An RNA of 177 nucleotides, treated with DMS and 2A3 and read out base by base. It was measured as part of the RMDB library OK2TST. DMS adducts were read by reverse transcription with MarathonRT.
RNA sequence: GGGAACGACUCGAGUAGAGUCGAAAAGUGGCUCCAAUCUCAGCAGCGACGAUGAGUCCAUGUCCGAGGAUGAGUUCGGUCUGGAAAUCGACGAUAACGGAGGCUACCAGGACACCACCUCCUCACACAUAGUACCCACGUUCGCGUGGGUACUAUGAAAAGAAACAACAACAACAAC
Reactivity to DMS in 0.01 (KOAc 150mM, MgCl2 10mM, bicine 150mM(pH8.5), 24C), signal-to-noise 3, nucleotides 027 to 126: g050u010g010g000c220u000c030c080a100a090u010c070u000c070a060g000c080a080g020c020g040a060c040g020a070u000g020a140g000u010c020c040a070u010g010u000c040c050g010a030g010g000a100u010g000a200g030u000u000c080g030g000u000c000u000g000g000a020a040a060u010c040g000a160c060g020a110u000a120a100c120g000g010a080g000g000c060u000a130c070c040a060g020g020a080c120a050c020c040a060c030c040u000c010c010u000c060a100c250a180
Reactivity to 2A3 in 0.01 (KOAc 150mM, MgCl2 10mM, bicine 150mM(pH8.5), 24C), signal-to-noise 2, nucleotides 027 to 126: g020u030g000g000c010u010c020c000a070a050u020c040u000c040a100g020c020a020g020c020g080a040c030g030a060u100g060a050g150u010c000c020a060u130g030u000c000c030g010a020g090g040a140u170g040a070g060u090u010c040g000g030u000c000u000g030g000a020a030a030u030c020g040a040c000g050a110u080a220a080c110g030g030a020g050g000c010u020a050c030c050a070g010g040a030c020a020c060c000a010c000c010u000c000c000u050c020a080c000a000